[RMDB]
RNA sequence: GGGAACGACUCGAGUAGAGUCGAAAACGCAAAACAGUGAGUGGACGGAAUAAAUCCCCUUCCCACCUCCCCACUGUCCACUCACUGUCUUCCUAAUAGGAAAUAUAAAUCGGGGGUGGGAAGGGGAAUCCCACCGCCAUUUCGAUGGCGGUGGGAUAAAAGAAACAACAACAACAAC
Reactivity to 2A3 in 0.01 (KOAc 150mM, MgCl2 10mM, bicine 150mM(pH8.5), 24C), signal-to-noise 1, nucleotides 027 to 126: c030g020c060a070a080a030a030c000a000g010u010g000a000g010u000g000g000a000c020g040g040a050a040u060a160a130a030u020c000c000c000c000u000u000c000c000c000a000c000c000u040c000c060c000c100a050c030u030g000u020c000c010a000c000u000c000a000c000u000g000u010c040u000u020c000c000u090a140a150u050a090g080g000a020a090a000u290a060u050a020a150a080u190c070g000g000g000g000g000u010g000g000g000a000a000g000g000g000g030a000